[RMDB]
RNA sequence: GGGAACGACUCGAGUAGAGUCGAAAACCUCUAGUAUUCGUACUAGAGGCACAUGCCGCCCCAACGGCUUCGUGACGGGGCGGAUUCACUUUAAAUGGAGCAAAGCCGCUGUGUUCGCACAGCGGAAUCUGCAUCUUAGAUUCGUCUAAGAUGCAGAAAAAGAAACAACAACAACAAC
Reactivity to 2A3 in 0.01 (KOAc 150mM, MgCl2 10mM, bicine 150mM(pH8.5), 24C), signal-to-noise 6, nucleotides 027 to 126: c000c000u000c000u000a000g010u000a020u040u040c220g040u050a000c000u000a000g010a000g000g020c040a020c010a090u170g020c000c000g000c000c000c000c010a020a020c040g100g000c010u070u100c020g020u010g030a040c070g000g010g010g020c050g040g000a000u090u080c020a020c040u100u120u200a090a160a090u210g020g000a020g020c020a080a040a020g060c000c000g000c010u010g000u000g030u060u080c230g030c090a000c000a000g010c010g000g000a000a010
Reactivity to DMS in 0.01 (KOAc 150mM, MgCl2 10mM, bicine 150mM(pH8.5), 24C), signal-to-noise 5, nucleotides 027 to 126: c010c010u000c000u020a000g010u000a030u010u010c180g020u000a010c000u000a010g000a020g000g020c050a020c160a110u000g000c000c000g000c000c000c000c000a090a200c050g010g010c070u000u000c010g010u010g010a120c300g000g000g020g020c000g000g000a010u010u010c080a070c170u000u010u010a060a060a120u000g000g000a030g000c050a100a140a150g010c000c000g010c000u000g020u000g010u000u020c210g010c020a000c000a010g000c010g000g000a020a010
The record gives the reactivity of an RNA of 177 nucleotides to 2A3 and DMS. DMS adducts were read by reverse transcription with MarathonRT. Conditions: 150 mM KOAc, 10 mM MgCl2 and 150 mM bicine (pH 8.5), 24 C.